[RMDB]
Structure probing data (2A3 and DMS) for a 177-nucleotide construct. DMS adducts were read by reverse transcription with MarathonRT. The data come from the RNA Mapping Database (RMDB), libraries RFM100 and RFMREP.
RNA sequence: GGGAACGACUCGAGUAGAGUCGAAAAAGAAAACAAGAAGUUUGAAUUCCUGAAUGAUUUUUUUCUGCAGAUAGGGGCUUAGGAUAAUGAUUUGUGCUUUAUUGGGGCAGAUUAGUCACAGUGUCACCAAUGUGCAAAUCUUCGGAUUUGCACAUUGAAAAGAAACAACAACAACAAC
Reactivity to 2A3 in 0.01 (KOAc 150mM, MgCl2 10mM, bicine 150mM(pH8.5), 24C), signal-to-noise 3, nucleotides 027 to 126: a000g060a000a030a010a000c080a010a020g260a100a080g100u070u060u090g120a100a100u060u050c000c000u070g050a070a080u060g030a100u110u000u060u040u030u060u000c010u020g000c010a000g020a080u010a040g010g010g000g040c020u040u080a050g100g000a030u080a140a100u210g070a080u020u020u070g030u050g020c010u000u120u010a080u000u140g000g010g100g000c000a000g010a120u080u060a030g000u010c010a010c000a030g040u000g010u090c010a020c070
Reactivity to DMS in 0.01 (KOAc 150mM, MgCl2 10mM, bicine 150mM(pH8.5), 24C), signal-to-noise 4, nucleotides 027 to 126: a090g020a120a050a040a060c040a110a100g030a150a100g010u010u010u010g000a140a120u010u010c020c000u000g010a080a100u010g000a010u000u000u000u000u010u000u000c020u010g010c050a080g010a070u010a050g020g000g000g020c020u000u010a040g000g000a090u020a060a060u010g000a090u010u020u010g010u000g000c040u000u020u020a080u030u000g010g000g000g000c030a050g000a110u000u010a050g000u000c030a070c120a070g000u000g000u010c040a070c150
The reactions ran in a buffer of 150 mM KOAc, 10 mM MgCl2 and 150 mM bicine (pH 8.5), at 24 C. For 2A3 the reverse transcriptase was SuperScript II with manganese.